[RMDB]
Structure probing data (DMS and 2A3) for a 170-nucleotide construct. DMS adducts were read by reverse transcription with MarathonRT. The data come from the RNA Mapping Database (RMDB), library 15KLIB. 2A3 adducts were read by reverse transcription with SuperScript II with manganese.

RNA sequence: GGGAACGACUCGAGUAGAGUCGAAAAGUCCGUGGAAUUCACCCUCUUACCGCUUCUCCACACUCCUUCCCCCCUGCGGGCUCCCCCCAUAAGAUGACGAGGACCCCACUCAUCGGGGUCCGCAGUCUAAGCAUUCUCUUCGGAGAAUGCAAAAGAAACAACAACAACAAC
Reactivity to DMS in 0.01 (KOAc 150mM, MgCl2 10mM, bicine 150mM(pH8.5), 24C), signal-to-noise 3, nucleotides 027 to 129: g000u000c000c000g050u000g000g000a140a080u030u020c030a130c050c030c020u010c040u000u050a120c100c070g020c080u000u080c000u030c000c000a070c090a030c060u010c020c000u000u010c000c000c000c000c000c000u000g020c030g000g000g050c020u010c000c000c000c000c000c000a080u060a070a070g000a080u060g020a030c030g020a250g000g000a060c020c000c000c000a100c120u060c180a070u040c190g020g000g000g020u040c000c030g020c050a180g000u020c000u030a070a180
Reactivity to 2A3 in 0.01 (KOAc 150mM, MgCl2 10mM, bicine 150mM(pH8.5), 24C), signal-to-noise 6, nucleotides 027 to 129: g010u000c000c000g010u030g040g060a110a100u130u060c030a080c010c010c000u030c010u020u100a090c020c060g030c040u070u020c020u010c010c000a030c000a060c060u040c010c020u010u040c000c000c000c000c000c000u010g020c040g000g000g000c020u040c030c010c000c010c020c000a020u080a100a060g120a100u220g000a000c010g010a040g010g010a010c010c010c000c000a030c050u180c020a160u190c090g000g000g010g000u000c000c000g000c000a000g000u000c010u010a040a010
The reactions ran in a buffer of 150 mM KOAc, 10 mM MgCl2 and 150 mM bicine (pH 8.5), at 24 C.